Chemical mapping of a 177-nucleotide RNA with DMS and 2A3. The reactions ran in a buffer of 150 mM KOAc, 10 mM MgCl2 and 150 mM bicine (pH 8.5), at 24 C. The data come from the RNA Mapping Database (RMDB), library RFMREP.

RNA sequence: GGGAACGACUCGAGUAGAGUCGAAAAUGUAUUUUUAGGUAUCCGUAUAAUUGACUUUUUGACUUUGAACUGCACUGUCGCAGGUCGUUGACUAAAACGGCUUAUAUUGAUUCGUCAAUAUAAGCCGGAAUCUGGAAGGGUUCGCCCUUCCAGAUUCAAAAGAAACAACAACAACAAC
Reactivity to DMS in 0.01 (KOAc 150mM, MgCl2 10mM, bicine 150mM(pH8.5), 24C), signal-to-noise 2, nucleotides 027 to 126: u010g010u010a030u000u000u000u000u010a050g000g020u000a090u010c170c120g010u000a130u010a060a080u000u000g010a080c070u000u010u000u000u000g010a020c010u010u000u010g010a100a190c060u010g000c030a100c220u000g000u000c140g010c060a040g000g000u000c000g000u000u010g010a100c040u000a040a070a090a300c010g030g000c010u000u000a000u000a020u000u000g000a020u010u010c220g000u010c000a000a000u000a000u000a000a000g010c000c000g000
Reactivity to 2A3 in 0.01 (KOAc 150mM, MgCl2 10mM, bicine 150mM(pH8.5), 24C), signal-to-noise 2, nucleotides 027 to 126: u060g010u010a130u040u010u020u110u070a070g080g010u040a100u100c060c010g050u160a120u070a190a080u080u070g070a060c000u050u020u010u010u040g000a000c020u080u030u060g050a090a050c010u060g100c070a100c160u280g060u300c150g000c040a010g010g020u030c000g010u000u020g100a160c020u030a010a080a090a050c020g000g030c010u000u000a000u000a010u010u010g000a010u020u040c070g010u020c070a010a000u010a010u000a010a000g000c000c000g000

DMS adducts were read by reverse transcription with MarathonRT.